The data come from the RNA Mapping Database (RMDB), libraries RFM100 and RFMREP.
Structure probing data (DMS and 2A3) for a 177-nucleotide construct.
For DMS the reverse transcriptase was MarathonRT.
The reactions ran in a buffer of 150 mM KOAc, 10 mM MgCl2 and 150 mM bicine (pH 8.5), at 24 C.
[RMDB]
RNA sequence: GGGAACGACUCGAGUAGAGUCGAAAAGCAGAAUCAUUAGGCUAAUAACGCUUAUUUGCAUUCUUAUCAUGCCAGCAGCAUGCCGUUAAAUACUGCUUCACAGUGCUCGCUCACUGAGAAAGUUUCCUCGGCCAUUCAUAUUCGUAUGAAUGGCCGAAAAAGAAACAACAACAACAAC
Reactivity to DMS in 0.01 (KOAc 150mM, MgCl2 10mM, bicine 150mM(pH8.5), 24C), signal-to-noise 2, nucleotides 027 to 126: g030c060a010g050a010a000u000c070a090u020u030a000g000g000c000u000a050a070u060a150a130c300g000c020u000u000a040u000u000u000g120c100a030u000u040c050u000u040a130u050c080a100u000g000c080c140a050g000c050a120g020c100a080u000g000c000c020g020u000u010a010a000a180u040a100c000u000g000c000u000u010c060a060c110a120g010u000g000c130u030c040g050c050u000c010a040c060u050g050a060g000a090a110a110g010u030u000u000c020c000
Reactivity to 2A3 in 0.01 (KOAc 150mM, MgCl2 10mM, bicine 150mM(pH8.5), 24C), signal-to-noise 4, nucleotides 027 to 126: g000c000a000g020a060a060u100c020a060u100u070a040g000g000c010u050a140a100u190a300a080c090g040c010u090u150a070u100u150u050g000c010a000u080u000c010u120u170a090u170c060a020u030g010c000c030a010g000c040a000g000c010a040u110g000c020c000g070u050u060a020a070a020u070a110c000u000g010c000u030u030c020a060c030a040g100u070g100c000u020c030g000c010u000c010a060c120u130g010a000g010a040a120a000g000u000u000u000c000c000